The record gives the reactivity of an RNA of 177 nucleotides to 2A3 and DMS. 2A3 adducts were read by reverse transcription with SuperScript II with manganese. The RNA was probed in 150 mM KOAc, 10 mM MgCl2 and 150 mM bicine (pH 8.5) at 24 C. It was measured as part of the RMDB library OK2TRN.
[RMDB]
RNA sequence: GGGAACGACUCGAGUAGAGUCGAAAAUGAGGUGGUGUGCGUCAGCCAUCAGCUGCCGGUGUGGACGCUGCGGCUGUAUCUGACCGGUAAGCGCCUCUGGCACGAUCCGCGCCGUCGGGACUGCGCAGCGCUACCUCUGAUUCGUCAGAGGUAGCGCAAAAGAAACAACAACAACAAC
Reactivity to 2A3 in 0.01 (KOAc 150mM, MgCl2 10mM, bicine 150mM(pH8.5), 24C), signal-to-noise 2, nucleotides 027 to 126: u160g010a030g000g000u030g010g110u030g030u130g110c080g010u070c030a000g000c050c040a040u020c030a070g020c020u040g050c030c040g070g000u090g020u160g110g110a090c070g010c030u030g040c050g020g010c000u040g050u100a090u070c040u020g050a070c000c030g000g080u110a120a010g040c010g020c010c000u050c080u030g040g020c050a000c100g040a070u040c010c010g000c030g010c010c050g110u170c010g030g030g090a070c030u010g000c060g000c030a050
Reactivity to DMS in 0.01 (KOAc 150mM, MgCl2 10mM, bicine 150mM(pH8.5), 24C), signal-to-noise 2, nucleotides 027 to 126: u000g000a000g010g030u010g000g030u000g020u000g030c130g000u000c040a060g000c080c080a070u010c030a080g000c020u000g000c030c020g020g040u000g020u010g000g020a070c080g030c030u000g010c140g030g000c000u010g020u000a060u000c060u000g020a030c090c030g000g000u000a060a130g010c010g020c010c030u010c040u010g010g020c060a080c150g000a130u010c040c020g020c050g030c040c040g010u020c040g000g000g000a180c070u000g000c060g000c080a140